Chemical mapping of a 177-nucleotide RNA with 2A3 and DMS. For 2A3 the reverse transcriptase was SuperScript II with manganese. It was measured as part of the RMDB library TTRDEL. The RNA was probed in 150 mM KOAc, 10 mM MgCl2 and 150 mM bicine (pH 8.5) at 24 C. The DMS profile rests on 8,819 reads. Reactivities are rounded to 0.1 and cut off at 0 and 3.

RNA sequence: GGGAACGACUCGAGUAGAGUCGAAAAGAUAUGGAUGCUACAGAGCGCAGAUACGUAACAUCAGUCGGAAACGACUGUGGUGUAGCUCUUGAGCAUCCUAAGUCAAAGCUGGGGUUCGCCCCAGCAAGAAUAUUUGUCUGUUCGCAGACAAAUAUUCAAAAGAAACAACAACAACAAC
Reactivity to 2A3 in 0.01 (KOAc 150mM, MgCl2 10mM, bicine 150mM(pH8.5), 24C), signal-to-noise 6, nucleotides 027 to 126: g020a010u050a020u120g000g000a000u000g000c000u050a170c030a050g010a010g030c030g020c050a010g130a300u300a200c150g130u180a160a040c020a090u240c020a020g000u010c010g000g010a040a030a050c010g000a000c010u030g000u040g030g050u080g010u040a110g000c010u000c000u040u140g010a020g000c010a000u000c000c000u000a010a000g020u000c030a120a080a030g000c000u010g000g030g010g050u070u100c230g140c010c000c030c000a000g000c000a000a000
Reactivity to DMS in 0.01 (KOAc 150mM, MgCl2 10mM, bicine 150mM(pH8.5), 24C), signal-to-noise 7, nucleotides 027 to 126: g010a040u000a300u000g000g020a010u000g000c000u000a110c140a030g000a010g020c020g030c160a100g000a280u000a070c170g010u000a060a140c060a070u010c010a010g010u000c000g010g000a090a070a140c010g020a010c000u000g020u000g010g000u010g010u000a070g010c010u000c000u000u000g010a040g000c000a010u000c010c000u000a010a070g000u000c020a090a120a130g000c000u000g000g010g000g020u000u020c280g000c000c000c000c000a010g000c000a020a020